RNA sequence: GGGAACGACUCGAGUAGAGUCGAAAAGCUAGGAGUUAGAGGAGACCGAAGCGAGGAGGAAAGCAAAGAAAGCAACGGGGCUAGCCGUCAGGUGUUCCACCCCCCGAGAGGGUACGAGUGAGGCUUAAUGGCAUCGGGUUCGCCCGAUGCAAAAGAAACAACAACAACAAC
Reactivity to 2A3 in 0.01 (KOAc 150mM, MgCl2 10mM, bicine 150mM(pH8.5), 24C), signal-to-noise 3, nucleotides 027 to 129: g050c040u080a030g000g050a040g040u150u070a010g070a000g100g010a000g000a010c010c060g000a010a000g040c040g000a030g000g000a000g000g000a040a020a000g020c060a010a040a000g050a030a100a010g050c030a020a030c070g000g040g020g020c020u040a050g050c030c010g070u050c040a060g070g010u030g030u070u020c020c000a040c000c000c010c000c010c020g040a050g040a000g050g010g000u090a010c010g020a010g010u150g030a000g000g000c020u090u010a080a000u190g050
Reactivity to DMS in 0.01 (KOAc 150mM, MgCl2 10mM, bicine 150mM(pH8.5), 24C), signal-to-noise 4, nucleotides 027 to 129: g000c090u040a080g030g010a080g000u030u040a050g030a060g070g010a190g040a090c050c010g010a140a060g000c090g070a050g040g010a040g050g030a020a050a080g050c210a010a070a030g030a060a070a100g000c060a040a080c190g000g000g000g050c120u010a080g010c020c040g020u060c080a050g030g030u050g030u000u010c150c000a100c070c060c080c000c000c030g020a090g030a160g000g000g000u010a030c150g000a040g030u020g020a110g030g040c070u000u020a070a060u050g080